[RMDB]
RNA sequence: GGGAACGACUCGAGUAGAGUCGAAAAGGUAGUUGAUACCUCUCAUUAGCGAACAGCACCGGUUCGUAGAGGCUGGCUAGGCAACUACCACAGUAUGAUUGGUAGGGACUUGCCUCCACCGUUACUGACAGCACUAGAUAUUCGUAUCUAGUGCUGUAAAAGAAACAACAACAACAAC
Reactivity to DMS in 0.01 (KOAc 150mM, MgCl2 10mM, bicine 150mM(pH8.5), 24C), signal-to-noise 6, nucleotides 027 to 126: g000g020u000a000g000u020u020g000a120u000a050c020c010u000c030u000c120a140u040u040a150g020c040g000a010a020c010a080g020c090a110c090c090g000g000u000u000c000g030u000a080g000a050g000g010c240u000g000g000c200u010a030g010g020c030a170a020c000u010a010c010c000a060c110a000g000u040a060u020g000a110u020u010g000g000u010a040g000g000g020a180c180u010u020g000c020c000u000c020c010a080c090c050g010u020u020a040c090u000g010
Reactivity to 2A3 in 0.01 (KOAc 150mM, MgCl2 10mM, bicine 150mM(pH8.5), 24C), signal-to-noise 4, nucleotides 027 to 126: g000g010u040a000g000u040u200g030a040u030a030c000c000u000c000u000c000a110u040u160a030g000c010g000a000a020c010a000g130c020a060c030c050g050g000u000u000c000g000u010a030g000a010g060g000c080u010g000g000c010u010a000g010g000c000a010a020c000u000a010c000c000a000c000a000g150u120a110u150g070a130u030u030g000g000u020a010g030g000g030a040c020u000u020g010c000c000u000c000c000a000c000c030g020u000u070a040c010u000g030